[RMDB]
RNA sequence: GGGAACGACUCGAGUAGAGUCGAAAAGCAAACAACGUACAUUCUAUAAUACCUGAAGUACGAAAAGGUAAAUAUAUAAAGCAUCAGCUAAAAGGUCAGCUAGAUGCAUAUAUAAAAAGACCAAAAACGCUAGUAUUUAGUUCGCUAAAUACUAGCGAAAAGAAACAACAACAACAAC
Reactivity to DMS in 0.01 (KOAc 150mM, MgCl2 10mM, bicine 150mM(pH8.5), 24C), signal-to-noise 2, nucleotides 027 to 126: g030c090a130a090a090c170a110a170c020g000u000a020c030a080u000u000c080u000a090u010a100a100u010a180c100c100u020g000a070a100g000u000a040c010g010a100a070a040a130g000g000u010a000a080a170u010a040u000a020u010a020a130a100g050c000a000u000c000a010g000c000u000a060a090a080a180g000g000u010c140a000g010c000u000a100g040a000u000g000c000a090u000a000u000a000u010a050a030a010a140a130g020a070c010c040a030a080a070a060a150
Reactivity to 2A3 in 0.01 (KOAc 150mM, MgCl2 10mM, bicine 150mM(pH8.5), 24C), signal-to-noise 3, nucleotides 027 to 126: g060c060a080a070a080c050a080a030c040g000u020a020c020a260u040u020c010u090a140u080a300a240u140a210c010c040u020g010a020a000g000u000a000c010g060a010a120a030a050g010g000u000a020a090a010u040a010u000a000u010a040a200a010g000c010a000u000c010a000g000c030u080a140a180a080a020g180g120u140c040a010g010c000u030a060g000a020u000g000c000a000u010a000u000a000u000a000a100a000a000a000g040a010c010c000a000a130a000a010a000

Description:
Chemical mapping of a 177-nucleotide RNA with DMS and 2A3. In probing experiments dimethyl sulfate is read out at A N1 and C N3, which are open when not base-paired. It was measured as part of the RMDB library M2PK90. Conditions: 150 mM KOAc, 10 mM MgCl2 and 150 mM bicine (pH 8.5), 24 C. For DMS, 1,439 sequencing reads were counted. Values are in units of 0.01, from 0 to 300, in steps of 10.